[RMDB]
RNA sequence: GGGAACGACUCGAGUAGAGUCGAAAAGCCUUUUUAAAAUAUUUGAUUCCCCUGACUGCUUAGAAUUUGGUCUGGGUCUACAGAAAAGUGUAAGUGCAUAUUAGAGAAAAGGCCUGAUCUAAUACGCACACCUAAUUGUGUUCGCACAAUUAGGUGUAAAAGAAACAACAACAACAAC
Reactivity to DMS in 0.01 (KOAc 150mM, MgCl2 10mM, bicine 150mM(pH8.5), 24C), signal-to-noise 1, nucleotides 027 to 126: g030c010c010u000u030u030u000u020a070a090a160a160u000a080u010u000u010g010a280u010u000c060c000c010c080u000g000a080c070u000g010c070u020u000a030g000a170a150u010u000u010g030g030u010c020u000g000g000g020u010c070u030a060c060a020g000a040a070a100a130g010u000g010u020a060a080g010u010g000c020a000u000a010u010u000a010g010a100g020a080a100a070a000g000g000c020c070u000g000a120u000c010u010a010a030u000a000c060g010c030